[RMDB]
RNA sequence: GGGAACGACUCGAGUAGAGUCGAAAAGGGAGGAAACGCAACCCGAGAGUGAGAUGAACGACAAGGGGCGAAGAUCCUCGGAAGGAAUUCUCCCAAGAAGCGAAGAGAACACAAGAAUCGGAAGUCUAACGCAUCUACUUCGGUAGAUGCAAAAGAAACAACAACAACAAC
Reactivity to 2A3 in 0.01 (KOAc 150mM, MgCl2 10mM, bicine 150mM(pH8.5), 24C), signal-to-noise 7, nucleotides 027 to 129: g020g000g000a020g030g000a030a050a020c080g010c070a070a060c020c000c010g020a020g000a000g020u100g010a100g010a120u100g050a080a020c040g070a010c050a050a080g030g000g000g000c030g020a030a010g020a030u050c000c020u000c010g020g010a010a010g020g000a000a010u140u000c020u000c010c000c010a020a030g080a030a010g020c040g000a020a010g020a020g010a020a000c040a010c010a060a040g040a050a040u070c020g040g030a040a020g040u000c030u090a040a030c090
Reactivity to DMS in 0.01 (KOAc 150mM, MgCl2 10mM, bicine 150mM(pH8.5), 24C), signal-to-noise 8, nucleotides 027 to 129: g020g010g010a040g020g040a030a040a070c170g000c120a090a100c100c030c020g000a010g020a080g030u070g010a080g000a080u040g000a080a050c090g030a090c130a060a120g000g000g020g000c120g020a060a060g030a060u000c060c020u030c070g020g000a030a030g000g000a030a050u030u050c030u020c010c000c040a060a040g010a010a030g050c040g020a030a000g020a010g000a040a040c050a070c100a070a020g020a060a050u020c080g010g010a070a090g020u030c040u000a060a170c240